[RMDB]
RNA sequence: GGGAACGACUCGAGUAGAGUCGAAAAGAUAUGGACGUCUGUGUAUCAAGCGUGUGGUUCGGAAACGAACCACCGCUGACCACGCACACAUGACGUCCUAAGUCAAACCGAUCGUUCGCGAUCGGAAGAGAGCUGAUUGGUUCGCCAAUCAGCUCUCAAAAGAAACAACAACAACAAC
Reactivity to 2A3 in 0.01 (KOAc 150mM, MgCl2 10mM, bicine 150mM(pH8.5), 24C), signal-to-noise 2, nucleotides 027 to 126: g040a000u060a010u100g000g010a010c000g000u020c000u020g040u000g060u070a130u300c250a240a090g000c000g050u300g000u010g140g030u010u000c040g030g050a060a050a020c000g010a000a000c000c000a000c000c000g010c000u000g020a010c020c050a190c200g270c010a010c000a000c000a030u300g000a000c010g000u000c000c000u020a030a000g000u010c030a030a050a080c040c000g010a010u030c000g040u120u140c300g010c010g190a010u020c000g010g010a110a020
Reactivity to DMS in 0.01 (KOAc 150mM, MgCl2 10mM, bicine 150mM(pH8.5), 24C), signal-to-noise 2, nucleotides 027 to 126: g000a060u010a300u000g000g000a010c000g040u000c010u010g020u000g010u000a160u000c180a110a020g000c000g040u020g080u000g010g000u000u000c010g040g000a090a080a190c000g030a000a000c000c000a000c010c030g000c000u000g000a070c270c210a200c250g010c260a110c000a010c070a010u000g030a000c000g030u000c000c030u000a010a090g010u000c030a050a100a190c000c000g000a000u000c000g020u000u040c230g040c020g020a020u030c000g020g000a060a000

An RNA of 177 nucleotides, treated with 2A3 and DMS and read out base by base. For 2A3, 2,478 sequencing reads were counted. Conditions: 150 mM KOAc, 10 mM MgCl2 and 150 mM bicine (pH 8.5), 24 C. DMS adducts were read by reverse transcription with MarathonRT. The data come from the RNA Mapping Database (RMDB), library TTRDES.